[RMDB]
Chemical mapping of a 177-nucleotide RNA with 2A3. Conditions: 150 mM KOAc, 10 mM MgCl2 and 150 mM bicine (pH 8.5), 24 C.
RNA sequence: GGGAACGACUCGAGUAGAGUCGAAAAUGUGCAUUGUGCCGAGAACAUUGUUUUCGCUGCUUUGCGUUGCCGUUUUGUGUUGCAGUUGGUUGGCUAACGCCGCUACUGCGCCGGUUAGCGUCGCUCGGCGUACCGUACGCUUCGGCGUACGGUACGCAAAAGAAACAACAACAACAAC
Reactivity to 2A3 in 0.01 (KOAc 150mM, MgCl2 10mM, bicine 150mM(pH8.5), 24C), signal-to-noise 1, nucleotides 027 to 126: u110g140u000g050c130a120u040u120g070u020g150c060c010g040a000g040a060a010c070a300u300u300g060u150u010u020u010c060g000c050u110g030c100u060u000u110g030c000g110u070u090g010c040c040g000u000u000u200u250g120u030g000u080u120g050c030a030g000u090u120g080g020u290u110g010g000c000u000a150a000c150g000c000c010g000c000u070a000c060u000g010c000g000c010c000g000g060u180u200a030g000c030g030u040c090g030c090u010c000g010